RNA sequence: GGGAACGACUCGAGUAGAGUCGAAAAAGCCACCAGCGUGCUGACUGUGGACGUGUGGGACAGCCUCGGCUGGCUGGAGGGGCGGCUCUCCCUCAAGGGCCUCACAGGGCGCAAGGAGACGAAGCAGGCGCCCUGUGUCUUUCGAGACACAGGGCGCAAAAGAAACAACAACAACAAC
Reactivity to 2A3 in 0.01 (KOAc 150mM, MgCl2 10mM, bicine 150mM(pH8.5), 24C), signal-to-noise 1, nucleotides 027 to 126: a070g030c040c000a030c000c000a070g010c020g100u070g050c000u000g050a050c010u040g030u080g190g270a060c050g140u230g110u190g170g000g100a070c040a010g000c000c050u010c040g050g000c010u100g140g060c010u030g010g000a070g020g140g010g000c000g020g010c040u000c000u060c000c030c010u000c030a070a040g050g030g020c050c000u040c000a110c030a030g000g100g020c070g100c090a040a080g000g030a050g000a000c070g050a070a000g080c070a090g150
Reactivity to DMS in 0.01 (KOAc 150mM, MgCl2 10mM, bicine 150mM(pH8.5), 24C), signal-to-noise 1, nucleotides 027 to 126: a080g030c060c010a110c020c010a060g000c040g030u010g000c030u000g000a060c060u020g000u010g070g010a060c040g000u010g040u020g010g010g010a050c030a010g010c020c030u020c050g020g000c060u000g030g000c010u000g000g010a090g030g000g010g020c040g000g000c100u010c060u030c010c040c000u010c130a050a140g000g000g020c010c040u000c070a130c170a110g000g000g000c020g020c030a080a110g000g010a070g010a090c100g030a100a050g010c080a150g040
This 177-nucleotide RNA was probed chemically with 2A3 and DMS. For 2A3, 785 sequencing reads were counted. For DMS the reverse transcriptase was MarathonRT. The reactions ran in a buffer of 150 mM KOAc, 10 mM MgCl2 and 150 mM bicine (pH 8.5), at 24 C.